[RMDB]
Chemical mapping of a 207-nucleotide RNA with 2A3. 2A3 adducts were read by reverse transcription with SuperScript II with manganese. The RNA was probed in 150 mM KOAc, 10 mM MgCl2 and 150 mM bicine (pH 8.5) at 24 C. Reactivities are given for positions 27 through 156.
RNA sequence: GGGAACGACUCGAGUAGAGUCGAAAAGCUGACGCUGCGCUUCGUGCCCGUGGACCGCGAGGACAACACCUACUCGUACAAAGUGCGCUACACGCUGGCCGUGGGCGACAACCGCGUGCUGGACAUGGCCAGCACCUACUUUGACAUCCGCGGCGUGGUCACGUUGAGAUUUCGAUCUCAACGUGACAAAAGAAACAACAACAACAAC
Reactivity to 2A3 in 0.01 (KOAc 150mM, MgCl2 10mM, bicine 150mM(pH8.5), 24C), signal-to-noise 2, nucleotides 027 to 156: g060c040u010g000a020c010g000c010u020g000c010g010c000u100u130c110g000u060g000c000c020c000g000u070g000g030a240c040c060g010c040g050a060g030g030a040c020a110a040c030a200c000c010u130a140c060u040c120g030u070a040c120a090a070a000g070u050g010c060g000c010u090a070c100a000c050g030c040u140g020g000c000c040g020u000g010g000g010c030g060a030c010a080a010c010c000g060c070g040u070g000c000u000g010g010a000c010a220u230g060g000c030c000a000g020c010a010c000c000u040a050c010u180u080u060g060a050c010a010u050c010c000g060c010g010g000c040g030u020g040